[RMDB]
RNA sequence: GGGAACGACUCGAGUAGAGUCGAAAACGGUGAGGUGAGUAAUUUGGUCAUUAACUUGGUCAUGCCGCCGCCGAUGUUGAGCGGAGGCCACAGGUCGGCCGGAAGUGAGGAGCCACGAUGACGACGGCACCUAGCACAUUUUCGAAUGUGCUAGGUGAAAAGAAACAACAACAACAAC
Reactivity to 2A3 in 0.01 (KOAc 150mM, MgCl2 10mM, bicine 150mM(pH8.5), 24C), signal-to-noise 3, nucleotides 027 to 126: c020g030g030u070g060a040g010g030u060g010a090g080u090a080a220u080u090u130g030g010u020c030a020u030u130a080a060c240u030u040g010g000u070c020a030u110g010c000c010g000c010c010g000c010c010g050a100u170g090u290u110g020a040g000c020g000g050a050g000g030c000c010a050c010a040g080g030u070c020g000g020c040c050g030g020a060a010g050u080g040a050g010g040a010g000c010c000a040c030g020a060u070g000a020c060g000a000c000g020g020
Reactivity to DMS in 0.01 (KOAc 150mM, MgCl2 10mM, bicine 150mM(pH8.5), 24C), signal-to-noise 5, nucleotides 027 to 126: c080g010g010u000g020a080g010g010u000g010a120g020u000a040a090u000u000u000g010g010u000c020a070u000u010a100a110c120u000u010g010g010u000c050a070u000g000c010c010g000c010c010g010c020c040g000a080u000g010u010u010g000a200g020c020g000g000a070g000g020c010c100a040c090a070g010g000u000c110g020g000c050c020g000g000a070a060g020u000g000a090g000g000a090g010c050c030a040c090g010a090u010g010a060c070g010a060c080g010g000
Structure probing data (2A3 and DMS) for a 177-nucleotide construct. Source: RMDB library OK2TRN, as collected in RNAgym. Conditions: 150 mM KOAc, 10 mM MgCl2 and 150 mM bicine (pH 8.5), 24 C. 2A3 adducts were read by reverse transcription with SuperScript II with manganese. For DMS, 6,741 sequencing reads were counted. The 2A3 profile rests on 4,583 reads. For DMS the reverse transcriptase was MarathonRT.